Overview:
Chemical mapping of a 177-nucleotide RNA with 2A3 and DMS. For 2A3 the reverse transcriptase was SuperScript II with manganese. The DMS profile rests on 949 reads.

[RMDB]
RNA sequence: GGGAACGACUCGAGUAGAGUCGAAAAUGUCCGCUAUUCCUGUGGAAGCAGCAGGGUAGGAUGGCGUCAGAACGAACGACGAGCGGAAAAGCGGACGCCUCUCCUUUCCGCUCGCUGCACAAGAUUACAUAGUCAUCGCCUUCGGGCGAUGACUAUGAAAAGAAACAACAACAACAAC
Reactivity to 2A3 in 0.01 (KOAc 150mM, MgCl2 10mM, bicine 150mM(pH8.5), 24C), signal-to-noise 2, nucleotides 027 to 126: u080g070u030c000c000g010c030u000a070u140u160c020c000u040g030u120g030g000a270a030g000c070a000g000c000a000g000g000g000u010a110g040g060a020u050g030g000c000g000u090c010a050g050a220a080c160g020a080a000c070g140a030c030g000a010g090c000g000g010a000a080a000a050g080c040g000g000a000c000g000c000c030u050c010u060c040c020u060u010u010c060c000g030c000u010c070g000c030u020g060c000a040c020a200a000g050a100u000u210a080
Reactivity to DMS in 0.01 (KOAc 150mM, MgCl2 10mM, bicine 150mM(pH8.5), 24C), signal-to-noise 1, nucleotides 027 to 126: u000g000u000c080c000g090c000u110a050u060u020c000c000u000g020u000g010g060a180a130g020c130a200g000c100a110g000g000g050u000a060g000g060a050u010g000g000c100g000u000c070a000g050a200a020c190g000a100a260c110g040a230c080g000a050g000c040g000g000a060a070a070a080g050c000g070g000a000c000g000c150c100u060c220u000c080c070u000u000u000c000c010g000c000u000c030g000c060u000g000c120a160c250a030a040g000a020u050u000a180